Overview: An RNA of 177 nucleotides, treated with DMS and 2A3 and read out base by base. The reactions ran in a buffer of 150 mM KOAc, 10 mM MgCl2 and 150 mM bicine (pH 8.5), at 24 C. 2A3 is a SHAPE reagent: it acylates the 2'-hydroxyl of flexible nucleotides of all four kinds.
[RMDB]
RNA sequence: GGGAACGACUCGAGUAGAGUCGAAAAGAUAUGGAUCAUGUCCGACAACAGCUCUAUGUCGGAAACGACAUCAGAGACAUGUCGCAUGAUCCUAAGUCAAACGACGUUCACUUCGGUGAACGUCGAACAGGGAAUGUAGCUUCGGCUACAUUCCCUGAAAAGAAACAACAACAACAAC
Reactivity to DMS in 0.01 (KOAc 150mM, MgCl2 10mM, bicine 150mM(pH8.5), 24C), signal-to-noise 1, nucleotides 027 to 126: g000a010u000a050u030g000g000a050u000c010a000u000g000u030c110c040g030a000c010a190a110c180a170g030c010u000c010u010a020u000g000u010c010g040g010a020a010a010c000g030a010c000a000u000c300a000g000a060g000a030c120a170u000g050u000c000g000c000a010u000g000a000u010c000c000u000a010a020g000u000c010a180a120a270c060g000a000c000g010u010u010c000a020c000u000u020c190g000g020u000g010a000a000c000g000u000c010g000a010a080
Reactivity to 2A3 in 0.01 (KOAc 150mM, MgCl2 10mM, bicine 150mM(pH8.5), 24C), signal-to-noise 2, nucleotides 027 to 126: g020a000u040a000u000g000g000a020u000c050a020u030g170u250c290c070g050a020c040a300a090c060a190g000c000u000c000u040a000u000g000u000c010g000g230a010a000a010c020g000a010c020a020u220c300a030g000a000g050a070c090a290u300g000u000c000g000c010a000u030g000a000u000c000c000u000a000a000g000u010c000a160a040a070c030g020a000c000g000u000u000c000a000c010u040u190c300g180g010u030g000a020a070c000g000u000c000g000a020a010